[RMDB]
RNA sequence: GGGAACGACUCGAGUAGAGUCGAAAAACAUCACUUACGAGUGAUGAAACCUGGCCGAAAUCAUGUAAUAUAACAAUGAGUUCUAUUACAUGUUCCGGGUAGGAGCAGCACGAGUACGCUCGUGCAAAACGCCGCUAUUAUUCGUAAUAGCGGCGUUAAAAGAAACAACAACAACAAC
Reactivity to DMS in 0.01 (KOAc 150mM, MgCl2 10mM, bicine 150mM(pH8.5), 24C), signal-to-noise 2, nucleotides 027 to 126: a110c000a000u000c010a000c000u010u020a070c210g000a030g000u010g000a000u020g000a020a040a050c000c000u000g030g000c000c000g030a000a050a020u050c010a000u000g010u000a010a010u010a010u000a010a030c000a270a200u030g010a280g030u010u000c030u000a000u000u000a010c000a000u000g010u000u000c140c050g000g000g000u000a030g000g030a240g000c130a090g030c020a000c010g010a000g000u010a170c280g010c010u000c000g020u000g000c000a000a010
Reactivity to 2A3 in 0.01 (KOAc 150mM, MgCl2 10mM, bicine 150mM(pH8.5), 24C), signal-to-noise 4, nucleotides 027 to 126: a000c000a010u000c000a000c010u030u090a030c230g070a010g000u010g000a000u000g000a040a010a000c000c000u050g120g130c000c010g000a060a010a020u200c010a000u000g000u010a020a000u010a000u010a000a040c040a070a300u300g070a060g110u000u010c000u000a000u010u000a010c000a000u000g000u020u030c010c000g000g020g040u020a040g040g020a020g090c110a020g000c000a000c010g000a000g040u060a020c260g010c100u000c000g000u000g000c000a020a000